Description: Structure probing data (DMS and 2A3) for a 177-nucleotide construct. The reactions ran in a buffer of 150 mM KOAc, 10 mM MgCl2 and 150 mM bicine (pH 8.5), at 24 C. For 2A3 the reverse transcriptase was SuperScript II with manganese. It was measured as part of the RMDB library M2PK50.

RNA sequence: GGGAACGACUCGAGUAGAGUCGAAAACCCAGACCGUUCGCGGUCUGGGAAAACCGGAAAAAACAUGGGCCCAUGAGCCGAACCGGAAGGGCGUCCGCCCAAAAACUUGUGUCUUCGGACACAAGAACACCUUAGUCUUCUUCGGAAGACUAAGGUGAAAAGAAACAACAACAACAAC
Reactivity to DMS in 0.01 (KOAc 150mM, MgCl2 10mM, bicine 150mM(pH8.5), 24C), signal-to-noise 1, nucleotides 027 to 126: c000c010c000a000g000a010c020c000g020u000u010c160g030c000g040g020u000c000u040g000g000g010a010a010a050a140c020c000g020g010a010a050a120a080a100a100c150a120u020g010g000g010c040c010c120a080u000g020a130g010c020c000g010a080a130c030c030g010g010a110a060g000g000g000c010g000u000c060c120g000c000c010c030a030a080a070a070a120c000u000u000g010u000g000u000c000u000u020c080g020g000a010c010a000c000a000a010g000a050a130
Reactivity to 2A3 in 0.01 (KOAc 150mM, MgCl2 10mM, bicine 150mM(pH8.5), 24C), signal-to-noise 1, nucleotides 027 to 126: c020c000c000a000g030a010c010c000g020u030u060c150g010c010g120g010u030c010u000g000g000g000a020a040a000a040c010c000g030g080a170a270a000a030a030a040c120a140u110g040g000g020c080c040c050a180u240g040a000g030c000c010g010a040a020c000c010g010g010a090a030g010g010g000c010g040u080c060c120g080c000c000c000a040a070a000a020a000c000u010u000g000u000g000u000c000u010u030c140g100g030a000c000a000c000a000a000g010a010a020